RNA sequence: GGGAACGACUCGAGUAGAGUCGAAAAGCUGAGGGAGUGUUGAACGCGUAUGCUAAGGAGUCUGACCAGACAUGUCCAACAUCCUGCGGUGACAAACCGAGCGAGGGUACUCCGGCCACAGACCGGGCAUUCGGAGGUCUUUCGAGACCUCCGAAUGAAAAGAAACAACAACAACAAC
Reactivity to DMS in 0.01 (KOAc 150mM, MgCl2 10mM, bicine 150mM(pH8.5), 24C), signal-to-noise 1, nucleotides 027 to 126: g030c030u010g020a070g000g020g010a080g020u000g010u010u000g000a040a040c040g000c090g020u000a020u010g000c030u010a120a160g010g010a100g020u000c030u000g010a120c210c050a070g000a040c040a040u000g010u010c000c040a040a030c050a040u000c010c020u000g000c000g000g020u000g000a080c240a000a110a110c050c020g000a140g040c080g000a030g020g000g000u000a110c110u000c010c000g000g010c010c020a140c220a200g000a120c020c000g000g000g030
Source: RMDB library OK2TRN, as collected in RNAgym. The record gives the reactivity of an RNA of 177 nucleotides to DMS. For DMS, 928 sequencing reads were counted. Conditions: 150 mM KOAc, 10 mM MgCl2 and 150 mM bicine (pH 8.5), 24 C.